[RMDB]
RNA sequence: GGGAACGACUCGAGUAGAGUCGAAAACUUUAUGAACAUAAAGCUAGUUUUUAACAUUCUUAGAGACGGAGGUGGUGGACAGAGUUUACUUCUGAUAGUUUUCAUUAUUGCUAAAAAAGAGUAGAUCUGGGCAGAGCAGGAGCAGGCUUGUAAGGGCAUUCUCUAAAUUCUUCGGAAUUUAGAGAAUAAAAGAAACAACAACAACAAC
Reactivity to DMS in 0.01 (KOAc 150mM, MgCl2 10mM, bicine 150mM(pH8.5), 24C), signal-to-noise 2, nucleotides 027 to 156: c000u000u010u020a030u000g010a190a150c060a110u000a080a020a040g040c010u000a100g010u000u000u000u010u010a050a100c050a130u010u000c050u010u010a140g010a210g030a050c050g050g010a110g030g030u000g020g040u000g050g000a080c020a110g020a150g010u000u000u000a020c050u000u000c020u000g000a160u010a120g000u000u010u000u030c100a100u000u010a080u000u020g010c030u020a010a030a090a080a060a040g000a110g020u000a050g000a060u010c020u000g010g010g050c080a110g010a070g030c050a080g010g000a090g020c050a090g010g030c020u020u000g020u000a050a080g030g000g000c090
Reactivity to 2A3 in 0.01 (KOAc 150mM, MgCl2 10mM, bicine 150mM(pH8.5), 24C), signal-to-noise 2, nucleotides 027 to 156: c000u070u090u160a080u170g080a170a020c060a070u120a120a010a050g030c080u070a040g070u070u020u020u070u160a080a050c030a030u090u000c020u060u070a020g000a000g020a130c030g010g020a020g040g020u040g020g010u020g030g010a000c010a020g020a000g000u030u170u080a020c060u070u120c020u010g060a010u030a050g030u000u120u070u090c040a030u000u240a030u130u250g010c030u090a000a030a030a100a060a000g020a000g030u060a030g000a020u010c030u080g000g100g000c030a020g000a000g000c020a000g020g000a010g020c020a000g070g000c020u110u120g070u100a020a010g030g050g010c000
Notes: The record gives the reactivity of an RNA of 207 nucleotides to DMS and 2A3. The RNA was probed in 150 mM KOAc, 10 mM MgCl2 and 150 mM bicine (pH 8.5) at 24 C. For 2A3, 856 sequencing reads were counted.